Conditions: 150 mM KOAc, 10 mM MgCl2 and 150 mM bicine (pH 8.5), 24 C.
This 177-nucleotide RNA was probed chemically with 2A3 and DMS.
It was measured as part of the RMDB library TTRDEL.
[RMDB]
RNA sequence: GGGAACGACUCGAGUAGAGUCGAAAAGAUAUGGAUUGGGACAUGUUACAGCCUCGGAAACGAGGCUUUAACAACAGCCCACGGUCCUAAGUCAAAAGCCGAACUAAACUUCGGUUUAGUUCGGCAACAUUACAGACUGGUUCGCCAGUCUGUAAUGAAAAGAAACAACAACAACAAC
Reactivity to 2A3 in 0.01 (KOAc 150mM, MgCl2 10mM, bicine 150mM(pH8.5), 24C), signal-to-noise 2, nucleotides 027 to 126: g020a000u080a070u160g040g000a010u000u070g020g000g030a040c080a120u070g010u000u000a010c010a010g010c000c000u000c010g020g050a060a060a050c010g020a000g010g000c000u010u010u000a000a000c000a010a010c020a010g020c000c020c000a010c090g040g000u000c010c000u030a120a060g050u050c020a010a080a100a150g000c000c010g000a010a010c000u010a000a010a010c010u040u170c300g040g000u000u000u000a000g000u000u000c000g000g000c000a000a000
Reactivity to DMS in 0.01 (KOAc 150mM, MgCl2 10mM, bicine 150mM(pH8.5), 24C), signal-to-noise 6, nucleotides 027 to 126: g010a060u010a290u010g000g010a030u010u000g010g010g010a030c050a230u010g010u000u000a020c060a020g010c000c000u000c000g010g000a100a070a200c000g020a010g000g010c000u000u000u000a000a010c010a050a100c210a120g010c010c000c000a070c300g000g000u000c010c010u000a080a120g000u000c060a090a070a130a140g010c000c000g010a010a000c000u000a010a010a010c000u000u010c200g020g000u000u000u000a010g010u000u000c000g010g010c000a000a010